RNA sequence: GGGAACGACUCGAGUAGAGUCGAAAACAAUGGGAAGAAGCAGGUAUUAUUCCUCUUUAGGGUGCCAUCAGACUGCUUUCAGCAGAGUUAUUAAGGCUGUGACUGAUCAGAUGUCCCCUCGCUGCUGGAGGAAAGUGUAUUUCGAUACACUUUCCUCAAAAGAAACAACAACAACAAC
Reactivity to DMS in 0.01 (KOAc 150mM, MgCl2 10mM, bicine 150mM(pH8.5), 24C), signal-to-noise 4, nucleotides 027 to 126: c120a100a110u000g010g000g000a120a080g010a090a060g020c040a020g000g020u000a070u010u000a170u000u000c010c000u010c130u010u000u000a040g000g000g020u010g010c060c020a020u010c040a060g000a080c010u000g010c140u000u000u000c030a030g030c020a060g010a120g010u020u010a130u010u010a090a130g000g010c020u000g020u000g000a050c020u000g010a120u000c050a060g010a050u000g000u000c030c000c000c020u000c160g000c040u000g000c050u000g020
Reactivity to 2A3 in 0.01 (KOAc 150mM, MgCl2 10mM, bicine 150mM(pH8.5), 24C), signal-to-noise 4, nucleotides 027 to 126: c030a010a130u130g050g030g060a070a120g010a040a010g020c030a010g040g010u050a080u190u050a070u120u170c000c020u040c030u090u060u090a050g000g000g020u090g020c020c000a020u020c010a010g040a060c000u020g040c000u010u040u010c000a000g000c000a010g040a030g180u120u070a180u240u180a200a050g100g000c010u020g040u020g070a070c010u020g040a250u030c010a020g000a030u020g020u010c000c000c020c010u020c020g050c020u050g010c010u040g110